Source: RMDB library M2PK50, as collected in RNAgym. This 177-nucleotide RNA was probed chemically with 2A3 and DMS. For 2A3, 1,755 sequencing reads were counted. The DMS profile rests on 644 reads.
RNA sequence: GGGAACGACUCGAGUAGAGUCGAAAACGUGCUCUCUUCGGAGAGCACGAAAGAAAGCACAAAGCACCAAAUAAAGGAGGUGCAGGGAGCAACCACCAAUAAAAAGAAGUAGGUUCGCCUACUUCAAGUCUAACACUGUGUUCGCACAGUGUUAGACAAAAGAAACAACAACAACAAC
Reactivity to 2A3 in 0.01 (KOAc 150mM, MgCl2 10mM, bicine 150mM(pH8.5), 24C), signal-to-noise 2, nucleotides 027 to 126: c000g000u010g000c000u000c000u020c060u030u090c180g040g000a000g000a010g010c000a020c000g000a000a000a000g000a020a050a000g020c050a020c050a150a000a000g030c000a020c030c000a010a160a060u290a100a180a030g110g040a050g000g010u000g000c000a000g040g030g020a150g010c010a040a000c000c000a040c010c040a100a110u200a160a090a020a040a060g000a010a000g000u010a000g000g060u020u050c210g080c050c000u020a010c000u000u000c000a000a000
Reactivity to DMS in 0.01 (KOAc 150mM, MgCl2 10mM, bicine 150mM(pH8.5), 24C), signal-to-noise 1, nucleotides 027 to 126: c010g000u010g010c000u000c000u000c000u000u000c270g030g100a000g000a000g000c000a020c000g000a040a060a110g000a070a120a220g000c010a040c020a020a070a190g000c000a040c000c030a020a080a220u000a120a190a090g020g010a300g050g000u000g000c070a020g000g040g000a190g000c010a110a070c020c020a060c080c070a070a130u000a010a080a110a010a120g020a040a000g020u000a000g000g000u000u010c300g000c000c000u000a000c000u000u000c000a060a100